[RMDB]
This 207-nucleotide RNA was probed chemically with 2A3 and DMS. The 2A3 profile rests on 733 reads. The DMS profile rests on 2,443 reads. The RNA was probed in 150 mM KOAc, 10 mM MgCl2 and 150 mM bicine (pH 8.5) at 24 C. For 2A3 the reverse transcriptase was SuperScript II with manganese. DMS adducts were read by reverse transcription with MarathonRT.
RNA sequence: GGGAACGACUCGAGUAGAGUCGAAAAUGCUCCGGAACGGAGCAGGUCGCAGUGACUCGGAAGCUCGGACUGUCUAGUAACAACAUAGGUGACCGCAAAUCCGCAAGGACUCGUACGGUCACUGAAUCCUGCCCAGUGCAGGUAUCUGAACACCUCGCAAGAGGGAAGUCUUCGGACUUCCCUCUUGAAAAGAAACAACAACAACAAC
Reactivity to 2A3 in 0.01 (KOAc 150mM, MgCl2 10mM, bicine 150mM(pH8.5), 24C), signal-to-noise 2, nucleotides 027 to 156: u010g000c010u010c020c000g090g170a210a110c170g010g000a010g010c010a000g030g010u070c070g010c210a060g100u020g200a020c000u000c010g000g090a110a040g010c030u000c050g000g080a060c040u030g010u020c000u010a050g040u080a030a060c040a000a040c010a120u080a100g060g040u000g010a000c000c000g050c010a000a000a190u010c010c000g020c040a070a100g000g000a010c020u050c120g090u170a040c010g000g000u000c000a000c000u000g000a000a000u030c000c000u030g020c010c000c040a150g010u100g050c000a000g080g020u020a080u000c050u040g020a070a040c010a060c080c010u040c050g000
Reactivity to DMS in 0.01 (KOAc 150mM, MgCl2 10mM, bicine 150mM(pH8.5), 24C), signal-to-noise 2, nucleotides 027 to 156: u000g010c010u000c000c000g010g030a190a210c050g020g030a010g050c000a000g010g030u010c040g000c020a220g040u010g010a110c030u000c000g020g010a140a120g040c020u000c000g000g000a060c070u010g030u000c010u030a140g010u000a090a090c070a050a050c050a070u010a300g000g000u000g020a040c000c000g000c010a020a060a090u000c000c010g000c300a160a120g030g000a010c050u000c090g020u000a050c000g000g000u000c010a010c000u000g000a060a090u010c000c010u000g020c010c000c120a120g030u000g010c040a020g000g010u000a020u010c060u000g000a030a070c030a140c020c000u000c060g020